[RMDB]
RNA sequence: GGGAACGACUCGAGUAGAGUCGAAAAGAUAUGGACGUCACUACCCACCUCGUAGGAGCGGUAAUUCAUCUUUCUCGGAAACGAGAAAGAUGUGCCAGCUCCGUUCGAGAGGUGACGUCCUAAGUCAGAAACAUACUCGGUUCGCCGAGUAUGUUUCAAAAGAAACAACAACAACAAC
Reactivity to DMS in 0.01 (KOAc 150mM, MgCl2 10mM, bicine 150mM(pH8.5), 24C), signal-to-noise 1, nucleotides 027 to 126: g010a060u000a270u010g100g000a000c000g040u000c030a000c000u010a200c010c060c040a300c060c000u000c000g000u010a190g040g000a000g020c070g040g000u010a030a200u010u000c050a000u000c000u000u000u000c000u000c000g020g000a110a080a150c000g000a000g030a030a010a010g000a000u000g010u000g000c010c000a150g000c000u000c000c010g000u000u020c040g050a070g040a110g040g030u010g000a000c010g010u000c000c010u000a030a070g000u040c180a180
Reactivity to 2A3 in 0.01 (KOAc 150mM, MgCl2 10mM, bicine 150mM(pH8.5), 24C), signal-to-noise 1, nucleotides 027 to 126: g170a070u300a160u300g020g000a000c000g020u110c000a070c030u300a300c050c010c000a040c030c000u000c010g010u050a100g000g000a040g000c000g030g110u160a260a300u220u120c020a000u030c000u030u000u000c000u010c000g060g050a100a150a110c000g000a000g000a000a000a030g000a000u010g000u000g000c000c030a190g000c000u030c000c030g000u070u040c030g000a000g000a010g000g060u010g010a000c000g000u000c000c000u010a010a010g120u130c160a010